[RMDB]
RNA sequence: GGGAACGACUCGAGUAGAGUCGAAAAUGGGAGUUCGCUCCCAAAGCACGGGGUCUAUGUGUGGGCUAGCUUACAUCUGAAGCCUCCACGGAUGCGGAGCUUGGACCCGUAACAUCACAUAGACGGAGGCACCCAGGUUGCUAGUUUCGACUAGCAAACGGUUGUACACUUUCGAGUGUACAACCGUAAAAGAAACAACAACAACAAC
Reactivity to 2A3 in 0.01 (KOAc 150mM, MgCl2 10mM, bicine 150mM(pH8.5), 24C), signal-to-noise 3, nucleotides 027 to 156: u050g000g010g000a000g000u100u090c120g130c070u020c000c000c050a030a070a010g070c060a020c120g090g020g070g030u010c010u000a010u010g020u010g010u090g000g040g020c090u050a030g000c000u000u000a010c010a020u000c010u040g070a130a030g060c020c020u010c050c020a030c020g010g000a000u010g030c160g160g020a020g000c050u130u160g170g110a290c000c000c000g010u060a060a080c050a100u110c020a000c000a010u010a000g000a000c010g000g010a010g030g000c020a050c020c020c000a020g080g120u060u020g000c010u010a000g010u020u150u170c170g100a150c010u000a000g000c000a010a040
Reactivity to DMS in 0.01 (KOAc 150mM, MgCl2 10mM, bicine 150mM(pH8.5), 24C), signal-to-noise 1, nucleotides 027 to 156: u010g020g010g010a030g000u000u010c260g000c000u010c000c000c020a020a050a070g020c110a100c060g000g040g050g050u000c020u000a030u000g020u010g030u010g010g030g040c010u000a030g000c030u000u000a040c010a050u000c020u020g000a050a060g050c050c000u010c010c050a300c050g010g000a050u000g010c020g000g020a050g010c020u000u000g130g020a050c000c010c030g020u000a070a110c110a200u000c020a040c010a060u000a010g000a030c040g000g030a120g040g040c040a140c010c020c010a300g020g010u000u010g000c000u010a040g020u010u000u020c060g030a300c020u010a020g010c070a040a050

Record summary: The data come from the RNA Mapping Database (RMDB), library RNAMAK. The record gives the reactivity of an RNA of 207 nucleotides to 2A3 and DMS. For 2A3, 2,809 sequencing reads were counted. DMS adducts were read by reverse transcription with MarathonRT.